[RMDB]
RNA sequence: GGGAACGACUCGAGUAGAGUCGAAAAAGAGUCGGAUACGUCCGGCUCAACGGGGGAUACGUGUGGUGCCGUCCGCUCCCCCUAUGGCAUAACAAAUGCACCACACACUAGGCUACGGCCUAGUGAAAAAAUCCCUACAUGUUCGCAUGUAGGGAAAGGAUAGUCGUAGGUUCGCCUACGACUAUCCAAAAGAAACAACAACAACAAC
Reactivity to 2A3 in 0.01 (KOAc 150mM, MgCl2 10mM, bicine 150mM(pH8.5), 24C), signal-to-noise 2, nucleotides 027 to 156: a000g000a010g000u000c010g010g000a020u010a060c110g100u010c000c000g010g020c000u020c010a000a010c010g000g000g000g000g000a010u020a080c000g010u020g020u030g010g020u000g000c000c020g030u030c010c020g070c070u040c010c000c000c000c020u050a120u180g140g020c090a070u070a220a060c030a070a120a000u050g000c000a000c000c020a020c000a000c000a000c000u000a000g000g000c020u010a010c260g080g000c000c000u000a000g000u030g020a030a000a000a000a000a020u020c000c010c000u010a000c000a000u030g010u070u080c100g000c150a000u000g000u000a010g000g000g010a010a010a010